RNA sequence: GGGAACGACUCGAGUAGAGUCGAAAAUCUCUAAAACACUGGGCUACGUUUUUCAACGCUCGAGAGGCAGAGUCUCAAGGAGCCUCCAAUGGGCCUCACGUAUUCAUCUAGAUGGCGCUUCGGACAACAUAGAGAAAUUCUUCGGAAUUUCUCUAUGAAAAGAAACAACAACAACAAC
Reactivity to DMS in 0.01 (KOAc 150mM, MgCl2 10mM, bicine 150mM(pH8.5), 24C), signal-to-noise 1, nucleotides 027 to 126: u010c000u000c030u020a070a100a110a030c040a090c030u010g020g000g010c020u000a020c100g010u000u000u000u030u030c050a090a090c150g010c010u000c060g000a110g010a020g020g000c040a140g010a170g020u000c020u000c110a100a160g010g010a100g010c030c030u000c030c150a000a070u000g010g000g000c010c020u000c060a020c070g000u000a070u000u000c040a070u000c040u000a060g000a060u010g010g030c040g060c050u000u010c060g000g000a020c120a060a200

Structure probing data (DMS) for a 177-nucleotide construct. Source: RMDB library RFMREP, as collected in RNAgym. The RNA was probed in 150 mM KOAc, 10 mM MgCl2 and 150 mM bicine (pH 8.5) at 24 C. Values are in units of 0.01, from 0 to 300, in steps of 10. The DMS profile rests on 670 reads.